The record gives the reactivity of an RNA of 177 nucleotides to DMS. The reactions ran in a buffer of 150 mM KOAc, 10 mM MgCl2 and 150 mM bicine (pH 8.5), at 24 C.

[RMDB]
RNA sequence: GGGAACGACUCGAGUAGAGUCGAAAAUUCGAGGGCAAGCUCAAGGAGUUCUCGGGGGACGUACUCCGGAGUGCGGUGGCCCUGGCCAAGGACUGGCGUACCGACAGGAUGUUGAGGCGACUCGAGGGGGAACUGUUUAGUUCGCUAAACAGUUCCCAAAAGAAACAACAACAACAAC
Reactivity to DMS in 0.01 (KOAc 150mM, MgCl2 10mM, bicine 150mM(pH8.5), 24C), signal-to-noise 1, nucleotides 027 to 126: u010u010c080g010a090g000g020g010c070a120a150g000c030u000c010a060a100g000g000a080g020u010u000c060u000c050g030g000g000g000g020a160c120g000u000a000c040u000c010c000g000g000a090g020u000g010c090g000g020u000g030g000c020c080c000u000g010g030c070c150a170a000g010g010a080c050u000g000g000c010g000u010a080c070c050g060a100c080a100g010g000a110u010g010u000u000g000a120g040g030c050g000a160c030u000c040g000a080g020g000